[RMDB]
RNA sequence: GGGAACGACUCGAGUAGAGUCGAAAACGCAGGAUCAAGUGAGAAUUGUCGCGCUCUCAAAAUGAUUUGAUUUUGCUCACAUUGGGCGCCAGGAACUACUUGAGCUUGCACAUAAGUAUGCGUGUCGGUUCUUAGGAUCCACUUCUACUGUGUCCAAAUUCACAUACUGUUUCGACAGUAUGUGAAUAAAAGAAACAACAACAACAAC
Reactivity to DMS in 0.01 (KOAc 150mM, MgCl2 10mM, bicine 150mM(pH8.5), 24C), signal-to-noise 3, nucleotides 027 to 156: c100g000c010a060g000g030a020u010c030a030a060g010u030g010a070g030a060a140u000u000g000u010c010g000c020g000c030u020c030u040c080a070a070a060a080u010g000a160u010u000u000g010a130u000u000u000u010g020c150u010c080a070c090a160u000u000g010g010g050c020g030c010c030a120g010g010a100a130c030u000a040c030u000u020g010a040g020c020u000u020g030c010a120c070a080u000a060a150g020u000a060u000g020c050g020u010g020u010c040g000g000u000u000c010u010u010a130g020g010a060u000c040c020a050c040u010u000c060u000a100c050u000g030u010g000u000c010c010a060a090
Reactivity to 2A3 in 0.01 (KOAc 150mM, MgCl2 10mM, bicine 150mM(pH8.5), 24C), signal-to-noise 9, nucleotides 027 to 156: c060g010c000a010g010g020a050u020c020a010a010g020u080g110a070g090a140a190u100u070g090u180c060g000c000g010c000u000c010u030c040a050a060a060a040u150g100a220u120u130u100g070a070u050u090u180u270g070c040u060c040a070c020a070u050u090g000g000g000c000g000c010c000a030g060g010a070a080c010u030a000c010u040u010g000a000g010c000u010u010g100c020a000c000a030u160a060a100g110u110a060u200g100c110g030u040g050u080c080g020g020u040u000c000u060u110a100g010g070a030u040c030c020a020c020u100u050c010u070a070c030u030g010u010g010u050c020c000a070a140
Overview
Structure probing data (DMS and 2A3) for a 207-nucleotide construct. Reactivities are given for positions 27 through 156. The reactions ran in a buffer of 150 mM KOAc, 10 mM MgCl2 and 150 mM bicine (pH 8.5), at 24 C. 2A3 adducts were read by reverse transcription with SuperScript II with manganese.